[RMDB]
RNA sequence: GGGAACGACUCGAGUAGAGUCGAAAAAGCGUAGCGGUACGCCGCUACGCAAGGCGCAUUUGAACUGAAUUGUACGCCUUGCAUAAAGCAAAAGUACUAAAAAAACGUGCCGUUACGACGGCACGAAAAAACAUCCAUUGGUUCGCCAAUGGAUGAAGACUAGACUUGGGUUCGCCCAAGUCUAGUCAAAAGAAACAACAACAACAAC
Reactivity to 2A3 in 0.01 (KOAc 150mM, MgCl2 10mM, bicine 150mM(pH8.5), 24C), signal-to-noise 2, nucleotides 027 to 156: a000g040c030g000u000a000g020c000g000g030u040a020c200g040c030c000g060c000u000a000c020g000c000a000a000g000g000c010g020c040a060u060u080u170g160a280a100c090u080g030a050a020u140u050g020u060a030c000g010c000c000u000u030g000c010a060u080a260a100a100g020c020a010a000a070a000g100u040a090c140u210a040a030a000a010a010a000a100c000g020u000g020c020c000g020u010u060a080c270g000a000c020g050g010c000a000c000g000a010a030a000a020a000a000c000a000u010c000c000a000u010u000g040g010u020u010c100g070c120c000a000a000u000g020g000a000u000g000a000a030

About this RNA
Chemical mapping of a 207-nucleotide RNA with 2A3. Conditions: 150 mM KOAc, 10 mM MgCl2 and 150 mM bicine (pH 8.5), 24 C. 2A3 adducts were read by reverse transcription with SuperScript II with manganese.